[RMDB]
RNA sequence: GGGAACGACUCGAGUAGAGUCGAAAAAGCAGCCACAAGCAGCAGUUGCUUGCUUCAUUAGGCUUCACAUUAGUUUUUUCACACAGCGCGCAGGCGCUUGCCAUUAGUUGCCAAGAGUUUUGCGCGCAGCACAUUUUGCUUCAGCAGCAAGCAGCAGUAAACACUUCAAAUUCGUUUGAAGUGUUUAAAAAGAAACAACAACAACAAC
Reactivity to 2A3 in 0.01 (KOAc 150mM, MgCl2 10mM, bicine 150mM(pH8.5), 24C), signal-to-noise 3, nucleotides 027 to 156: a010g070c060a040g030c030c020a050c070a140a020g050c060a010g020c050a070g060u120u060g040c020u010u040g010c020u080u040c020a180u080u140a020g020g010c000u100u130c060a120c030a080u110u140a110g080u040u060u060u060u230u240c090a070c020a020c010a050g000c000g000c000g010c020a020g030g010c010g000c010u000u010g000c010c000a050u150u150a100g100u200u090g010c040c010a010a000g010a010g020u060u090u300u070g000c000g010c010g000c010a000g000c020a010c020a020u070u140u140u110g000c000u090u110c080a070g000c000a000g000c000a050a000g000c010a010g020c010a000g010
Reactivity to DMS in 0.01 (KOAc 150mM, MgCl2 10mM, bicine 150mM(pH8.5), 24C), signal-to-noise 3, nucleotides 027 to 156: a080g020c050a080g010c030c050a090c080a070a120g040c040a100g030c060a210g000u000u000g020c010u000u000g010c030u010u000c060a150u010u010a130g010g020c020u000u010c050a090c070a140u000u000a080g010u000u000u000u000u000u010c030a090c070a160c060a200g010c010g030c020g060c070a070g000g010c000g020c020u000u000g030c070c020a100u000u010a130g020u000u010g000c040c000a040a060g000a040g010u000u000u000u000g030c010g020c000g010c040a020g000c070a040c030a060u000u000u000u000g000c000u000u000c010a110g020c120a130g020c040a030a050g000c030a060g030c040a160g020
The record gives the reactivity of an RNA of 207 nucleotides to 2A3 and DMS. 2A3 adducts were read by reverse transcription with SuperScript II with manganese. The DMS profile rests on 8,138 reads.